[RMDB]
RNA sequence: GGGAACGACUCGAGUAGAGUCGAAAAGAUAUGGAUCGACGCUACAGAGGAACAUCGGAAACGAUGUUCUACCCACCUGUAGAACUACGUCUGUCCUAAGUCAAAGCAGCCACUUCGGUGGCUGCAACAUCACGCUAAUGUUCGCAUUAGCGUGAUGAAAAGAAACAACAACAACAAC
Reactivity to 2A3 in 0.01 (KOAc 150mM, MgCl2 10mM, bicine 150mM(pH8.5), 24C), signal-to-noise 2, nucleotides 027 to 126: g060a040u160a080u230g010g000a020u020c010g010a010c030g000c020u010a000c020a010g040a020g030g000a010a010c000a010u010c010g010g000a090a020a030c010g000a010u000g000u000u000c000u010a000c020c010c010a040c010c010u000g000u010a020g030a060a140c130u300a050c090g010u000c020u020g010u000c000c000u050a220a020g100u100c070a000a050a200g000c000a000g000c000c000a010c030u080u120c300g100g000u010g000g090c000u000g000c000a000a000
Reactivity to DMS in 0.01 (KOAc 150mM, MgCl2 10mM, bicine 150mM(pH8.5), 24C), signal-to-noise 3, nucleotides 027 to 126: g010a130u010a300u010g010g000a010u000c300g000a030c010g030c030u010a000c000a010g000a080g000g000a030a000c010a000u030c000g000g000a090a100a150c010g000a000u000g000u000u000c000u000a030c040c060c050a300c080c010u010g000u000a010g000a060a020c160u020a300c030g010u000c000u010g000u000c000c000u020a060a130g030u010c060a040a090a150g010c000a010g000c020c000a010c010u000u010c110g040g000u000g000g000c000u000g000c000a040a050
This 177-nucleotide RNA was probed chemically with 2A3 and DMS. 2A3 adducts were read by reverse transcription with SuperScript II with manganese. The RNA was probed in 150 mM KOAc, 10 mM MgCl2 and 150 mM bicine (pH 8.5) at 24 C. For DMS the reverse transcriptase was MarathonRT.